[RMDB]
The record gives the reactivity of an RNA of 177 nucleotides to 2A3 and DMS. For 2A3 the reverse transcriptase was SuperScript II with manganese. Reactivities are rounded to 0.1 and cut off at 0 and 3. For DMS, 22,621 sequencing reads were counted. DMS adducts were read by reverse transcription with MarathonRT. Conditions: 150 mM KOAc, 10 mM MgCl2 and 150 mM bicine (pH 8.5), 24 C.
RNA sequence: GGGAACGACUCGAGUAGAGUCGAAAACACACCGCCGAAUACUUGUAUGUCGGGAACGUGUUGAUCAAGCGGAAACAAGGCAGCAUAAGGAAGUAGUAGCGUAUGAGGUGUCAACACGCUAAGCUGGCGAUUAGCCUAGUUUCGACUAGGCUAAUCGAAAAGAAACAACAACAACAAC
Reactivity to 2A3 in 0.01 (KOAc 150mM, MgCl2 10mM, bicine 150mM(pH8.5), 24C), signal-to-noise 7, nucleotides 027 to 126: c040a000c010a020c010c030g090c020c000g060a070a030u080a130c100u110u160g080u170a090u170g180u090c020g000g020g010a060a010c050g010u010g010u060u050g030a100u110c080a080a030g020c010g040g070a070a050a070c040a080a080g090g000c020a020g000c020a060u070a180a080g120g010a060a000g010u130a010g020u030a010g040c000g010u060a070u100g070a080g030g050u100g010u030c010a030a020c020a020c090g000c010u040a050a030g040c030u050g060g010
Reactivity to DMS in 0.01 (KOAc 150mM, MgCl2 10mM, bicine 150mM(pH8.5), 24C), signal-to-noise 8, nucleotides 027 to 126: c040a050c040a130c060c050g010c010c020g000a060a040u010a070c110u030u030g020u020a050u020g000u000c020g000g010g020a090a060c130g010u000g000u010u010g000a090u050c140a060a080g020c060g000g010a070a070a080c120a080a080g020g000c010a030g000c040a100u020a110a080g000g030a080a050g010u000a080g010u000a040g000c020g000u000a060u000g000a070g010g010u020g010u020c040a050a080c110a020c040g000c030u000a060a090g010c020u000g000g010